[RMDB]
RNA sequence: GGGAACGACUCGAGUAGAGUCGAAAAUCUCAGCUAUUCGGGAGGCUGAGGCAGGGGAAUCACUUGAACCCGGGAGGCGGAGGUCGUAGUGAGCCGAGGUGGUGCCACUGCACUUCAGCCUGGAAACUACAUCAAGCUAGUUCGCUAGCUUGAUGUAAAAAGAAACAACAACAACAAC
Reactivity to 2A3 in 0.01 (KOAc 150mM, MgCl2 10mM, bicine 150mM(pH8.5), 24C), signal-to-noise 3, nucleotides 027 to 126: u050c010u000c000a030g000c010u090a120u190u130c030g040g060g000a010g010g050c010u000g020a010g020g020c040a080g000g040g000g060a040a100u100c040a060c150u080u090g090a130a090c000c020c000g030g040g010a050g020g040c020g010g040a020g030g000u100c090g030u060a030g030u010g090a020g010c020c020g010a080g030g240u240g020g010u060g030c060c000a020c040u020g020c010a040c090u040u030c010a020g010c010c000u000g000g070a030a030a010c030
Reactivity to DMS in 0.01 (KOAc 150mM, MgCl2 10mM, bicine 150mM(pH8.5), 24C), signal-to-noise 4, nucleotides 027 to 126: u000c010u000c000a060g010c060u010a130u020u000c070g000g000g010a120g010g000c010u000g010a020g020g010c090a060g000g000g010g000a110a040u000c050a050c070u000u010g000a070a160c070c020c010g010g010g010a070g010g010c040g010g000a060g000g010u000c120g020u000a050g010u010g010a300g030c010c020g010a110g020g010u010g010g010u000g010c050c010a030c010u000g010c010a030c020u000u010c000a030g020c000c010u000g000g000a110a070a120c190
Structure probing data (2A3 and DMS) for a 177-nucleotide construct. For 2A3 the reverse transcriptase was SuperScript II with manganese. It was measured as part of the RMDB library OK2TRN. The 2A3 profile rests on 3,287 reads. DMS adducts were read by reverse transcription with MarathonRT.